An RNA of 177 nucleotides, treated with 2A3 and DMS and read out base by base. The reactions ran in a buffer of 150 mM KOAc, 10 mM MgCl2 and 150 mM bicine (pH 8.5), at 24 C. The 2A3 profile rests on 2,716 reads. 2A3 is a SHAPE reagent: it acylates the 2'-hydroxyl of flexible nucleotides of all four kinds. 2A3 adducts were read by reverse transcription with SuperScript II with manganese. For DMS the reverse transcriptase was MarathonRT.
RNA sequence: GGGAACGACUCGAGUAGAGUCGAAAAGAAGCUAGCGGCGGAGACCCCGGUCCGAAUGCCCGUCGGCAGCAAACUCCUCUGGAGUCCUUCGGAUUUAAAGGAGAAAACUACCGGCGGAGGGUGAUCCACUAUAACAUUAGUUCGCUAAUGUUAUAGUAAAAGAAACAACAACAACAAC
Reactivity to 2A3 in 0.01 (KOAc 150mM, MgCl2 10mM, bicine 150mM(pH8.5), 24C), signal-to-noise 2, nucleotides 027 to 126: g040a070a040g020c020u060a010g030c030g080g000c000g040g000a030g000a050c000c010c000c060g030g070u000c010c010g060a170a090u130g030c050c000c000g000u000c000g010g000c000a000g010c000a040a050a090c000u000c020c010u050c030u130g230g010a030g020u030c000c020u190u250c180g000g020a030u070u030u060a060a030a010g000g000a000g000a030a240a030a030c000u000a020c000c000g000g000c000g000g010a020g030g020g020u060g020a070u020c020c010
Reactivity to DMS in 0.01 (KOAc 150mM, MgCl2 10mM, bicine 150mM(pH8.5), 24C), signal-to-noise 5, nucleotides 027 to 126: g010a170a160g000c040u000a060g030c060g010g010c050g010g020a100g010a120c140c020c010c050g000g010u010c020c030g000a070a100u000g000c090c000c010g010u000c020g000g000c010a010g020c040a050a150a250c000u000c000c010u000c040u010g020g010a010g000u000c020c000u020u000c170g020g000a020u000u000u000a040a140a040g010g000a010g000a050a080a150a100c000u000a030c010c010g010g010c010g000g010a060g000g010g020u000g000a100u010c060c110
Record summary:
Values cover nucleotides 27 to 126. Source: RMDB library VIROID, as collected in RNAgym.